[RMDB]
RNA sequence: GGGAACGACUCGAGUAGAGUCGAAAAAUCAGAGGGCGCUAUCAUGCAAACUAGGAUUGUCUGCUCAUGCACAGAACCAACUACCGAUCACUAACAGUGCAUGAAGGUUAGUUAUUCCAUAUUAAUUAAAACUCGUAAUUCUUCGGAAUUACGAGAACAUCUAAGGUUAGUUCGCUAACCUUAGAUGAAAAGAAACAACAACAACAAC
Reactivity to 2A3 in 0.01 (KOAc 150mM, MgCl2 10mM, bicine 150mM(pH8.5), 24C), signal-to-noise 9, nucleotides 027 to 156: a000u040c020a010g010a040g050g020g000c020g000c040u100a110u300c080a070u280g010c030a010a030a040c030u040a030g000g060a040u030u060g040u070c030u050g020c020u010c010a010u030g000c010a010c010a010g060a100a060c060c020a060a070c020u120a110c040c080g070a070u080c030a020c060u040a100a020c020a070g020u000g020c000a010u010g020a030a020g040g000u030u050a000g010u020u060a060u110u070c020c000a030u100a060u240u160a130a100u080u120a040a060a060a070c000u000c000g000u000a000a000u000u000c000u020u030c120g070g000a000a000u000u000a000c000g000a000g000a000a010
Reactivity to DMS in 0.01 (KOAc 150mM, MgCl2 10mM, bicine 150mM(pH8.5), 24C), signal-to-noise 5, nucleotides 027 to 156: a100u010c050a080g010a140g010g010g010c150g000c010u000a120u000c060a110u000g020c030a060a130a120c040u010a090g030g020a130u000u000g020u010c030u000g020c030u000c020a040u000g030c030a030c040a030g010a070a140c060c030a080a080c080u000a300c070c010g000a110u000c060a090c070u000a040a110c090a110g000u000g020c020a020u000g000a050a160g020g010u000u000a080g010u000u000a080u000u000c020c020a110u000a120u000u000a090a140u000u010a060a060a060a150c010u000c000g010u000a010a020u000u000c000u010u010c300g050g000a040a000u000u000a000c000g010a000g010a030a070